[RMDB]
RNA sequence: GGGAACGACUCGAGUAGAGUCGAAAACGAAGGAAAGCUUGACCAGCUAAUCUUCUGCUACGCCAUUACGAGGACUGCCCUUAGAGGCUCAUGGCGAUAGGUCACCCCGCCGGUCGGUCAGCUGCUUAUACCCGUGCACGGUUCGCCGUGCACGGAACAAUCACGAAAGCUUCGGCUUUCGUGAUUGAAAAGAAACAACAACAACAAC
Reactivity to 2A3 in 0.01 (KOAc 150mM, MgCl2 10mM, bicine 150mM(pH8.5), 24C), signal-to-noise 1, nucleotides 027 to 156: c040g010a000a000g000g090a300a100a020g030c020u060u040g030a010c000c000a000g000c000u020a110a000u050c020u010u010c010u010g000c020u020a000c020g030c000c000a050u090u090a080c150g050a030g190g090a120c100u140g050c050c000c010u100u040a090g020a130g070g010c020u000c020a060u040g000g020c010g200a180u020a000g060g000u050c020a150c010c000c000c020g050c040c080g090g050u060c100g030g030u050c000a020g040c040u140g000c040u300u030a170u030a090c000c000c020g000u000g010c000a000c000g010g060u020u130c130g060c070c000g000u000g000c000a000c010g010g000a000a000
An RNA of 207 nucleotides, treated with 2A3 and read out base by base. The RNA was probed in 150 mM KOAc, 10 mM MgCl2 and 150 mM bicine (pH 8.5) at 24 C. Values cover nucleotides 27 to 156. For 2A3, 559 sequencing reads were counted.